The data come from the RNA Mapping Database (RMDB), library OK1LIB. Chemical mapping of a 177-nucleotide RNA with DMS and 2A3. Values are in units of 0.01, from 0 to 300, in steps of 10. DMS (dimethyl sulfate) methylates the pairing face of unpaired adenines and cytosines. For DMS the reverse transcriptase was MarathonRT.

RNA sequence: GGGAACGACUCGAGUAGAGUCGAAAAGGCAUCAGUGCUAUCGCGUACGUUUUUUGAUCUCGAACAGCACCAUGAGAUCCGUACGGUCUUUUGACCGAUAGCGGUGCUGUUUCUUGUUUGAUGCCAAGGGUAUGACUAAGUUCGCUUAGUCAUACCCAAAAGAAACAACAACAACAAC
Reactivity to DMS in 0.01 (KOAc 150mM, MgCl2 10mM, bicine 150mM(pH8.5), 24C), signal-to-noise 2, nucleotides 027 to 126: g000g010c010a010u010c000a110g030u000g020c000u010a060u020c050g000c080g000u000a000c030g000u010u020u040u010u060u020g000a020u010c000u010c030g010a030a060c110a050g020c040a010c030c010a200u020g010a060g000a040u040c020c030g000u000a090c000g000g030u010c000u000u030u040u050g000a030c060c030g010a060u010a020g040c040g000g000u020g000c020u000g000u000u000u040c110u010u000g000u000u050u000g000a000u000g010c000c010a100a100
Reactivity to 2A3 in 0.01 (KOAc 150mM, MgCl2 10mM, bicine 150mM(pH8.5), 24C), signal-to-noise 6, nucleotides 027 to 126: g010g000c010a010u010c030a020g030u030g080c000u050a030u110c050g050c050g130u030a020c010g020u020u010u010u040u100u300g080a090u000c020u010c030g030a070a030c030a040g060c050a020c030c020a080u300g020a030g010a080u020c050c010g020u010a020c020g000g010u030c040u040u240u110u300g020a030c000c020g030a020u020a010g030c020g010g000u030g000c020u000g000u020u040u010c040u050u110g120u150u160u100g030a040u030g000c020c010a040a060